[RMDB]
RNA sequence: GGGAACGACUCGAGUAGAGUCGAAAAGAGUAAUUCGUUACUCACAGAGCGUACUACUAAGAGGAUACCUACCCAAUACUACCCACCUCCCAAAUAGGAGAGGUAUUGAACAGGUAUCUACCCACCUUAGUAUCGCGAAGGCCCUCUUCGGAGGGAACAUAGUUUGUAGAUUCGUCUACAAACUAUGAAAAGAAACAACAACAACAAC
Reactivity to DMS in 0.01 (KOAc 150mM, MgCl2 10mM, bicine 150mM(pH8.5), 24C), signal-to-noise 4, nucleotides 027 to 156: g000a090g040u000a030a060u000u010c270g040u000u000a030c000u010c000a170c110a140g020a300g010c030g020u000a070c160u000a030c000u000a020a040g000a160g010g020a040u000a020c000c000u010a040c040c020c000a040a060u000a040c010u000a050c040c010c050a300c110c000u010c000c000c010a030a110a260u000a040g010g000a010g010a160g000g010u010a000u000u000g010a020a040c030a020g040g020u000a020u000c000u000a010c000c000c040a300c110c010u000u000a030g000u000a020u000c030g030c000g020a130a110g030g000c010c000c000u000c010u010u000c290g080g000a040g030g020g020a020a060
Reactivity to 2A3 in 0.01 (KOAc 150mM, MgCl2 10mM, bicine 150mM(pH8.5), 24C), signal-to-noise 9, nucleotides 027 to 156: g020a000g010u070a040a050u170u230c250g050u100u030a010c000u010c020a080c060a050g180a040g030c010g020u090a110c060u000a000c000u010a030a000g020a010g020g000a000u000a000c000c000u020a050c020c020c000a000a010u020a010c030u060a080c020c050c050a070c020c020u050c010c020c030a180a300a150u240a100g010g000a010g000a010g000g010u000a000u000u020g010a040a030c030a100g000g000u010a000u000c000u030a050c030c030c020a060c010c010u010u000a000g010u010a020u300c020g000c010g020a020a020g080g010c000c030c000u000c010u020u040c220g120g000a000g000g000g000a000a000